[RMDB]
RNA sequence: GGGAACGACUCGAGUAGAGUCGAAAAGGGAUGCGAGGGGCUGAACGGUUUCGACUUCGCGCAUCGAAUCAAGGGAAGCGUGCCGGUGCAGGCAAGAGACCACCGUAAGCGUCGUUGCGACCAAAUAAACAUCCCUGUGCUUCGGCACGGGGAUGUUAAAAGAAACAACAACAACAAC
Reactivity to DMS in 0.01 (KOAc 150mM, MgCl2 10mM, bicine 150mM(pH8.5), 24C), signal-to-noise 3, nucleotides 027 to 126: g000g020g010a030u030g010c050g000a050g000g000g000g000c100u030g010a040a110c260g010g010u000u000u010c020g010a050c040u010u000c020g030c020g010c030a020u000c000g000a020a090u000c160a070a080g000g000g000a050a080g000c030g050u000g020c060c030g000g010u020g000c030a020g010g000c030a030a020g010a180g050a040c000c010a020c020c040g010u000a050a060g000c030g020u000c010g000u000u000g020c020g050a130c170c170a000a080a100u030a090
Reactivity to 2A3 in 0.01 (KOAc 150mM, MgCl2 10mM, bicine 150mM(pH8.5), 24C), signal-to-noise 3, nucleotides 027 to 126: g040g020g000a020u040g010c020g040a050g000g020g010g000c040u050g060a090a000c080g160g000u020u100u030c020g010a050c000u040u020c030g000c010g020c010a010u050c040g070a050a080u090c030a050a080g040g020g020a070a000g020c050g000u010g020c040c020g000g000u020g000c020a010g000g030c010a010a010g010a000g000a030c010c010a000c000c000g090u140a020a000g030c010g050u020c000g010u020u020g020c000g000a060c010c030a080a080a090u190a010
The record gives the reactivity of an RNA of 177 nucleotides to DMS and 2A3.